[RMDB]
RNA sequence: GGGAACGACUCGAGUAGAGUCGAAAACGCCACCAGAUGGGUGCUUGAACAGGUAUCCGGACGUAUCGUCAGUCUCAACCAGAGCGGGAUCCUCGUCAACGGCGACGACAUCCUAUUCCGUAUGCCCAAUGGGUGUGCAUUUCGAUGCACACCCAUUAAAAGAAACAACAACAACAAC
Reactivity to 2A3 in 0.01 (KOAc 150mM, MgCl2 10mM, bicine 150mM(pH8.5), 24C), signal-to-noise 1, nucleotides 027 to 126: c030g070c020c010a020c000c030a080g090a250u070g060g040g020u040g010c050u080u090g060a150a010c050a140g060g000u050a040u000c000c000g040g040a020c030g080u090a080u210c050g030u000c020a040g070u000c000u020c120a060a120c050c000a020g010a010g030c070g000g010g020a050u020c020c030u010c030g040u020c030a050a080c120g080g000c040g030a030c000g010a020c030a020u050c010c010u030a030u120u000c010c030g000u060a100u140g020c000c050c000
Reactivity to DMS in 0.01 (KOAc 150mM, MgCl2 10mM, bicine 150mM(pH8.5), 24C), signal-to-noise 1, nucleotides 027 to 126: c080g000c050c020a030c060c030a110g000a140u010g000g000g030u000g060c040u000u010g000a090a150c160a050g000g010u000a010u000c080c040g040g000a130c110g040u000a050u000c000g020u000c030a130g040u000c050u000c050a080a080c110c040a090g000a110g040c050g000g000g000a020u000c120c080u000c020g010u000c050a050a110c140g010g030c100g000a030c020g000a070c160a010u000c030c000u000a110u000u000c050c040g010u000a050u000g000c030c010c010